[RMDB]
RNA sequence: GGGAACGACUCGAGUAGAGUCGAAAAUGUGUCCUAGGGAAUUGGAAGGUCAUCCUUCACAGGAUCGUGUGGAAGUCCUGCUCCGGGCGGAAGCAUUAAAACCAUUCGAGCUAGUCAAUGCGUGGCGUUACCUCCAGGUUCUUCGGAACCUGGAGAAGAUAUGCGAGUUGUUCGCAACUCGCAUAUCAAAAGAAACAACAACAACAAC
Reactivity to DMS in 0.01 (KOAc 150mM, MgCl2 10mM, bicine 150mM(pH8.5), 24C), signal-to-noise 1, nucleotides 027 to 156: u030g010u010g030u000c020c040u000a160g010g010g010a090a170u020u000g000g030a050a050g020g000u000c050a110u010c010c010u020u040c070a100c030a060g010g020a020u000c070g010u000g030u000g080g000a240a050g010u000c010c030u010g000c000u020c050c090g040g010g010c130g030g020a140a120g010c000a050u000u000a040a060a120a080c030c030a080u000u010c020g000a100g000c000u000a110g010u000c060a080a080u000g030c020g030u000g030g020c080g030u030u000a080c070c000u030c010c000a040g020g010u000u010c000u000u040c300g040g020a020a010c000c010u010g030g000a000g030a000a020
Reactivity to 2A3 in 0.01 (KOAc 150mM, MgCl2 10mM, bicine 150mM(pH8.5), 24C), signal-to-noise 2, nucleotides 027 to 156: u080g070u010g010u000c010c000u060a090g070g020g030a060a130u160u140g040g020a050a020g010g050u170c100a060u090c010c000u090u040c070a030c000a060g050g000a020u050c050g010u030g000u010g080g000a020a030g010u000c010c020u040g030c010u050c020c000g030g020g000c030g010g000a030a000g010c010a030u030u160a010a060a030a040c030c010a050u070u070c040g060a050g000c020u070a030g090u090c050a080a030u050g000c060g030u020g050g020c050g000u030u110a090c000c010u020c010c000a010g030g000u000u000c020u010u090c170g090g010a000a000c020c010u000g020g000a000g000a000a000